RNA sequence: GGGAACGACUCGAGUAGAGUCGAAAACGAGCAUGUAUAUCGGAGCAAGCUUGGCUAGACAGAGCUAGAGAAGUGGGUCGAAGUGGGGCGUAAAGCAAGGACGGUCCAAGGGCGAGUAGACCUCCCUCGGCACGAGGAUGUGCCUGAUUUUGAAUGGGUACAUUAUUGUCUUCGGACAAUAAUGUACAAAAGAAACAACAACAACAAC
Reactivity to DMS in 0.01 (KOAc 150mM, MgCl2 10mM, bicine 150mM(pH8.5), 24C), signal-to-noise 1, nucleotides 027 to 156: c060g010a120g050c020a080u000g010u000a120u010a100u010c090g040g020a110g030c070a100a110g010c010u000u000g020g020c070u000a150g030a170c050a170g000a100g030c030u010a070g020a110g040a050a070g040u000g030g030g030u000c050g010a080a150g050u010g030g000g030g060c010g010u000a030a050a120g020c040a080a110g020g000a090c020g000g000u010c000c020a050a070g000g040g000c030g010a120g030u000a060g000a080c050c000u000c030c000c020u000c040g010g000c020a040c050g000a110g040g000a120u000g020u000g030c000c000u040g050a080u000u000u000u000g010a100a090u010g010g020
Reactivity to 2A3 in 0.01 (KOAc 150mM, MgCl2 10mM, bicine 150mM(pH8.5), 24C), signal-to-noise 6, nucleotides 027 to 156: c060g000a020g030c050a060u090g060u150a100u040a030u260c050g040g010a040g030c030a110a000g000c050u060u060g040g010c020u030a020g020a020c070a020g060a010g050c030u100a020g020a010g030a130a040g030u080g020g010g010u040c030g010a060a010g040u040g010g000g010g000c030g030u070a080a080a010g030c040a020a040g060g000a030c080g040g000u040c030c020a050a080g030g010g000c040g010a010g000u030a020g030a020c000c010u030c000c000c000u020c010g010g000c030a000c040g030a050g160g080a090u170g010u010g020c000c010u050g050a130u080u100u120u110g130a170a100u180g050g080